This 177-nucleotide RNA was probed chemically with DMS and 2A3. The reactions ran in a buffer of 150 mM KOAc, 10 mM MgCl2 and 150 mM bicine (pH 8.5), at 24 C.
RNA sequence: GGGAACGACUCGAGUAGAGUCGAAAAACCUAUGGAUUCGUCCAUAGGUGCUGGCGCGCGGCCUUUGUCCUGUCGCGUGUGCGUGGUGGGCGAUAUACGCGCAAUAGUGACAAUUCGUUGUCACUAACUACAACCUAUCUUUCGAGAUAGGUUGUAGAAAAGAAACAACAACAACAAC
Reactivity to DMS in 0.01 (KOAc 150mM, MgCl2 10mM, bicine 150mM(pH8.5), 24C), signal-to-noise 6, nucleotides 027 to 126: a020c000c000u000a010u000g000g010a040u000u010c190g020u000c000c000a000u000a000g000g010u000g000c060u000g010g010c100g010c010g000c020g000g000c050c080u000u000u000g000u010c030c020u000g010u000c010g020c010g010u010g020u000g020c040g040u000g000g010u000g000g010g010c020g010a040u000a200u000a070c020g010c010g010c050a130a140u000a010g010u000g000a010c000a020a040u000u010c190g020u000u000g000u000c000a000c000u000a010a120
Reactivity to 2A3 in 0.01 (KOAc 150mM, MgCl2 10mM, bicine 150mM(pH8.5), 24C), signal-to-noise 5, nucleotides 027 to 126: a000c000c000u000a000u000g000g000a010u010u100c170g050u030c090c000a000u000a000g000g020u020g060c090u070g070g090c060g000c000g010c000g040g050c020c000u070u070u070g080u120c020c000u050g030u040c010g010c040g050u160g140u170g140c030g000u020g010g030u050g000g020g000c010g010a010u010a010u020a120c020g010c000g000c010a030a080u080a040g010u000g000a010c010a010a030u060u070c230g090u100u010g000u000c000a000c010u010a040a050
Reactivities are given for positions 27 through 126. DMS adducts were read by reverse transcription with MarathonRT. For 2A3 the reverse transcriptase was SuperScript II with manganese.